[RMDB]
RNA sequence: GGGAACGACUCGAGUAGAGUCGAAAAAAUGCGGAUCUCACCUUUGCCGCUUGCCGCUGCCGGGUUAGUGAACUUAAUCACAGUGGUUUUCUGUGUGUCGUCCAGGUCUUCCAGAAUCGGGCGGAUCAUAAUUCGUUCUGUUCGCAGAACGAAUUAUAAAAGAAACAACAACAACAAC
Reactivity to 2A3 in 0.01 (KOAc 150mM, MgCl2 10mM, bicine 150mM(pH8.5), 24C), signal-to-noise 1, nucleotides 027 to 126: a000a040u120g000c060g000g000a060u040c060u030c040a110c020c030u130u120u080g070c030c000g000c000u020u080g010c000c000g000c030u000g030c040c050g090g030g030u030u050a050g050u100g230a100a070c040u080u100a060a030u100c000a010c000a030g010u060g030g120u050u030u070u010c000u040g030u000g000u010g050u050c000g020u000c060c010a080g000g040u000c000u170u050c040c010a040g090a100a060u040c040g030g000g000c010g020g000a040u090c000
Reactivity to DMS in 0.01 (KOAc 150mM, MgCl2 10mM, bicine 150mM(pH8.5), 24C), signal-to-noise 3, nucleotides 027 to 126: a070a050u000g010c020g000g010a080u000c050u000c060a090c080c050u010u000u000g030c020c010g000c030u000u010g010c030c020g000c020u000g010c080c080g000g000g000u000u000a060g020u020g010a060a120c120u010u000a080a090u000c010a060c020a040g010u000g010g000u010u010u010u000c020u000g010u010g010u000g020u000c050g020u000c010c020a120g000g020u000c040u010u000c040c050a100g010a110a090u010c060g010g010g010c020g030g000a060u000c100